[RMDB]
Conditions: 150 mM KOAc, 10 mM MgCl2 and 150 mM bicine (pH 8.5), 24 C. Chemical mapping of a 177-nucleotide RNA with 2A3 and DMS. Values cover nucleotides 27 to 126. For DMS the reverse transcriptase was MarathonRT. In probing experiments dimethyl sulfate is read out at A N1 and C N3, which are open when not base-paired. For 2A3, 10,283 sequencing reads were counted. The DMS profile rests on 7,470 reads.

RNA sequence: GGGAACGACUCGAGUAGAGUCGAAAAGAUAUGGAACUAUGGAGGAAGGAGAAACUAAUCGGAAACGAUUAGGUCCCUCCCCGAUGAAAUAGUUCCUAAGUCAAAGCCUAGCCUUCGGGCUAGGCAACUAAUAUAUCUUCUUCGGAAGAUAUAUUAGAAAAGAAACAACAACAACAAC
Reactivity to 2A3 in 0.01 (KOAc 150mM, MgCl2 10mM, bicine 150mM(pH8.5), 24C), signal-to-noise 5, nucleotides 027 to 126: g020a010u090a050u190g000g000a010a000c010u000a020u070g020g040a120g050g040a230a210g040g010a120g060a110a130a060c010u000a000a000u000c010g030g000a070a020a030c020g000a000u000u000a000g000g010u100c020c000c000u020c000c000c000c020g290a300u120g050a100a120a000u010a010g000u010u010c000c000u020a120a020g060u040c060a060a080a020g000c000c010u000a000g000c000c000u050u110c300g080g010g000c000u000a000g000g000c000a000a000
Reactivity to DMS in 0.01 (KOAc 150mM, MgCl2 10mM, bicine 150mM(pH8.5), 24C), signal-to-noise 6, nucleotides 027 to 126: g000a060u000a300u010g000g000a010a010c000u000a000u000g010g010a110g010g010a080a040g000g010a080g010a100a090a110c000u000a000a000u000c000g000g010a140a110a170c010g010a010u000u000a000g010g000u010c100c020c000u000c020c010c010c030g010a100u010g000a080a090a010u000a000g000u000u000c000c000u020a020a100g010u000c020a110a100a130g010c000c000u000a000g000c000c010u000u010c250g020g000g010c000u010a000g000g000c000a010a010